[RMDB]
RNA sequence: GGGAACGACUCGAGUAGAGUCGAAAAGGUGGUGUAUCUGCUGAAAGUCAUUCUUCACAGUUUAGGAAUUUGCAACGGUAACUUUUGCAUAGUGAUUUCUUGAAUAAUGGCGGCUGUGGAAUAUGAGGCAUACCCAGUGGUUCGCCACUGGGUAUGCAAAAGAAACAACAACAACAAC
Reactivity to 2A3 in 0.01 (KOAc 150mM, MgCl2 10mM, bicine 150mM(pH8.5), 24C), signal-to-noise 2, nucleotides 027 to 126: g100g000u060g000g000u000g020u030a090u060c000u020g000c010u000g080a110a160a000g030u010c010a140u000u080c010u040u040c020a010c050a020g170u050u080u110a080g000g120a060a000u000u030u090g010c010a060a000c100g060g020u060a060a200c070u020u010u110u000g010c000a030u080a130g080u140g100a060u020u060u060c020u000u100g080a130a070u090a230a070u070g070g000c050g000g010c020u000g010u010g060g060a020a060u130a070u200g090a020g000
Reactivity to DMS in 0.01 (KOAc 150mM, MgCl2 10mM, bicine 150mM(pH8.5), 24C), signal-to-noise 1, nucleotides 027 to 126: g000g000u010g000g000u000g040u010a050u000c040u000g020c010u000g080a080a060a020g010u000c070a130u000u000c010u000u000c000a000c060a060g060u000u000u000a030g000g000a060a050u000u000u060g000c040a080a080c300g010g000u010a060a160c110u010u010u000u040g000c020a000u000a240g000u090g000a160u000u040u000c040u010u000g010a010a080u000a040a100u000g020g000c130g040g030c080u000g000u020g010g000a050a060u000a040u000g000a150g010